[RMDB]
RNA sequence: GGGAACGACUCGAGUAGAGUCGAAAAUGGACUUGGCCUCGAUCUCAGCCCGGGAGCGGGUGCUGCGCCACGAUGUCAAGGCCCGCAUCGAGGAAUUCAACGCAUUGGCCGGUCAUGAGCACGUGCAGUGAACAUGAACUUUCGAGUUCAUGUUCACAAAAGAAACAACAACAACAAC
Reactivity to DMS in 0.01 (KOAc 150mM, MgCl2 10mM, bicine 150mM(pH8.5), 24C), signal-to-noise 4, nucleotides 027 to 126: u010g010g010a070c060u000u000g040g000c020c010u000c040g000a100u000c060u000c080a140g000c050c020c020g010g020g010a100g030c040g010g020g030u010g030c040u000g010c200g000c060c070a160c160g000a070u000g000u000c030a120a070g010g000c010c010c070g000c060a060u000c020g000a080g000g020a090a070u000u010c180a090a180c140g020c090a050u010u000g020g000c000c040g010g000u000c110a050u000g000a080g000c030a030c130g000u000g020c080a100
Reactivity to 2A3 in 0.01 (KOAc 150mM, MgCl2 10mM, bicine 150mM(pH8.5), 24C), signal-to-noise 4, nucleotides 027 to 126: u100g060g020a030c040u080u180g030g010c020c010u000c030g020a110u020c070u010c080a030g030c000c020c000g030g020g010a110g040c040g030g010g040u100g100c030u030g010c000g000c020c020a130c050g100a150u110g040u090c060a080a030g040g000c000c010c010g030c000a050u040c020g020a070g020g050a020a040u130u070c060a080a050c050g000c050a040u010u110g040g000c020c020g020g050u110c060a070u140g040a040g020c050a020c100g080u100g010c060a040